[RMDB]
RNA sequence: GGGAACGACUCGAGUAGAGUCGAAAAGGGCUUGAGCCAUCGCCCGAAUAAGAUGGAUGAUACAAGUCGACAUGGUACGCGACAUAGAACGUACUCAUUGAAGUGCGAAAGCACGAAGUCCGACGAGUCUGGGACGAUCAUCAGGCAAGACUUAGAACAUUUAUCCUAAUUUCGAUUAGGAUAAAUGAAAAGAAACAACAACAACAAC
Reactivity to DMS in 0.01 (KOAc 150mM, MgCl2 10mM, bicine 150mM(pH8.5), 24C), signal-to-noise 4, nucleotides 027 to 156: g030g000g040c010u000u000g000a120g010c100c040a040u000c020g000c040c020c020g010a100a110u010a080a150g020a100u000g010g010a080u010g020a150u010a100c060a080a160g020u000c020g020a110c040a140u000g030g000u000a020c020g010c030g010a300c160a190u000a150g010a110a050c010g010u000a010c000u020c110a080u010u000g010a110a190g030u000g000c000g000a090a080a180g010c000a020c010g000a100a100g010u000c010c010g020a080c030g000a140g000u000c030u010g020g030g020a060c030g000a030u000c030a100u000c020a040g010g010c020a070a080g010a070c030u000u000a130g010a100a200
Reactivity to 2A3 in 0.01 (KOAc 150mM, MgCl2 10mM, bicine 150mM(pH8.5), 24C), signal-to-noise 9, nucleotides 027 to 156: g040g020g000c020u050u080g050a020g050c040c010a020u020c020g020c000c020c010g040a070a130u200a090a030g030a030u070g040g020a030u090g020a020u080a120c060a100a030g020u020c020g010a020c010a040u060g000g000u010a010c010g030c040g060a060c070a110u200a050g060a060a000c000g000u020a000c030u050c160a020u020u170g090a150a030g000u000g010c010g050a100a030a000g000c000a000c030g010a040a000g020u020c070c030g010a020c020g010a030g020u000c020u040g020g010g020a050c030g020a050u070c020a040u020c020a020g030g000c040a070a010g010a040c000u060u100a040g040a120a010